[RMDB]
RNA sequence: GGGAACGACUCGAGUAGAGUCGAAAAUCUAACUCAUUCGUGAGUUAGAGUGAGCGCAGCGACCAUUGGCCCGGUGGCGCGCUGUCGGUGCCGCGCGUGGCGAUAGUGCUUGCUUCGGCAAGCACAAGUCAUGCGCCAAAUUCGUUUGGCGCAUGACAAAAGAAACAACAACAACAAC
Reactivity to 2A3 in 0.01 (KOAc 150mM, MgCl2 10mM, bicine 150mM(pH8.5), 24C), signal-to-noise 2, nucleotides 027 to 126: u030c000u010a000a010c000u000c000a010u060u020c180g120u040g040a000g000u010u000a000g010a010g030u110g100a050g010c080g000c040a020g000c020g080a120c020c030a060u030u140g090g030c020c010c010g050g000u040g000g060c080g000c010g020c060u050g070u080c060g030g040u070g010c010c020g070c020g020c040g070u090g040g010c020g000a060u060a110g020u000g010c000u000u000g040c010u030u020c190g070g000c000a000a000g010c000a000c000a010a000
Reactivity to DMS in 0.01 (KOAc 150mM, MgCl2 10mM, bicine 150mM(pH8.5), 24C), signal-to-noise 2, nucleotides 027 to 126: u010c000u000a010a000c000u000c000a060u000u010c240g050u000g010a010g010u000u000a000g000a030g030u000g010a140g010c060g010c020a050g030c000g000a090c020c000a100u010u000g010g000c010c030c080g010g040u000g000g010c040g000c050g000c020u000g010u000c050g010g020u010g000c040c010g020c060g010c050g020u010g020g000c010g000a100u020a070g000u000g000c000u000u000g000c000u010u020c160g020g000c060a010a020g020c000a010c010a050a090
Structure probing data (2A3 and DMS) for a 177-nucleotide construct. The DMS profile rests on 2,400 reads. The 2A3 profile rests on 2,056 reads.